[RMDB]
RNA sequence: GGGAACGACUCGAGUAGAGUCGAAAAAAGCGCAAAUCGUAGAGCUAGAGAGCUCAUUCUAUGCCUUGCUUGAUGGCAUUAAAGCGCAGCUCCCGAAUUUGGAUGACAGUGCUUAUCAACAGCAAGAAUUUAGGUACCUAUUCGUAGGUACCUAAAUAAAAGAAACAACAACAACAAC
Reactivity to DMS in 0.01 (KOAc 150mM, MgCl2 10mM, bicine 150mM(pH8.5), 24C), signal-to-noise 9, nucleotides 027 to 126: a080a070g010c010g020c010a100a110a090u000c100g010u010a120g010a020g010c010u000a170g010a160g010a090g010c010u000c010a140u010u000c100u000a070u010g010c080c010u000u000g010c110u010u000g000a050u010g000g000c000a010u000u010a050a070a100g000c040g020c020a080g010c130u000c000c010c010g010a080a110u000u000u010g010g010a080u000g010a090c140a070g010u000g010c020u000u010a080u000c050a050a060c160a050g000c050a030a060g010a230
Reactivity to 2A3 in 0.01 (KOAc 150mM, MgCl2 10mM, bicine 150mM(pH8.5), 24C), signal-to-noise 7, nucleotides 027 to 126: a000a000g050c060g000c030a120a110a070u180c140g140u180a080g000a010g000c010u080a060g060a020g030a010g300c000u000c010a010u090u000c010u030a060u080g000c000c010u050u070g030c030u070u110g080a040u100g060g000c010a000u020u130a100a090a030g010c000g000c010a020g010c020u020c000c000c010g010a050a110u160u130u140g110g050a050u090g030a040c030a080g060u020g060c010u140u170a100u110c030a050a070c020a070g020c010a030a030g020a080